Conditions: 150 mM KOAc, 10 mM MgCl2 and 150 mM bicine (pH 8.5), 24 C. Chemical mapping of a 177-nucleotide RNA with DMS.

RNA sequence: GGGAACGACUCGAGUAGAGUCGAAAAAAAAGCUAUUAAUGUUUUGAGAAGAUUCAGGAAAGAGAUUGGAAGGAUGCUGAAUGUCUUGAAUAGGAGACGCAGAUCUGCAGGCAUGAUCAUUAUGCUGGCUAUGCAGUCCAUUCGUGGACUGCAUAGCAAAAGAAACAACAACAACAAC
Reactivity to DMS in 0.01 (KOAc 150mM, MgCl2 10mM, bicine 150mM(pH8.5), 24C), signal-to-noise 1, nucleotides 027 to 126: a050a030a020a100g020c020u020a160u010u000a050a090u000g000u010u000u000u000g000a070g060a090a040g000a070u000u010c090a080g030g040a110a040a080g010a070g000a090u000u000g040g000a170a070g010g000a020u010g000c040u000g000a090a040u040g040u000c020u000u000g000a070a090u000a090g010g000a070g000a060c050g000c070a000g010a020u010c090u000g000c190a090g000g010c010a030u000g020a010u020c090a080u040u000a030u000g010c080u000g010